[RMDB]
Source information:
An RNA of 207 nucleotides, treated with 2A3 and read out base by base.
RNA sequence: GGGAACGACUCGAGUAGAGUCGAAAAAAUGGUAAUUAAGAUUAAUUGAAGGUUUACUCUGUGAACGCCAUUGUUUCAUUGCUCUAUGCAAAUUUUGUAGAGCAAAAAAUUCAUUGACCAGCAGCAUCAAAAUUAACUGGGGAGAGUGAUGCCAGCAGUCAUUAGCUACUUUCGAGUAGCUAAUGACAAAAGAAACAACAACAACAAC
Reactivity to 2A3 in 0.01 (KOAc 150mM, MgCl2 10mM, bicine 150mM(pH8.5), 24C), signal-to-noise 1, nucleotides 027 to 156: a000a020u080g000g000u060a090a060u100u010a040a050g010a040u050u070a040a060u080u140g020a080a040g060g000u000u000u060a070c070u060c160u170g020u030g150a060a000c010g020c040c010a000u000u000g010u090u130u010c070a080u060u010g010c020u000c000u000a000u040g060c040a160a300a300u180u200u070u130g000u000a000g000a020g000c000a000a010a000a010a010a010u220u140c070a110u080u030g040a060c020c020a000g010c000a000g000c000a010u060c020a000a220a300a170u280u200a090a080c050u070g000g000g000g000a040g000a010g080u030g000a010u050g000c000c010a000g000c010a010
2A3 adducts were read by reverse transcription with SuperScript II with manganese.
The reactions ran in a buffer of 150 mM KOAc, 10 mM MgCl2 and 150 mM bicine (pH 8.5), at 24 C.
The 2A3 profile rests on 598 reads.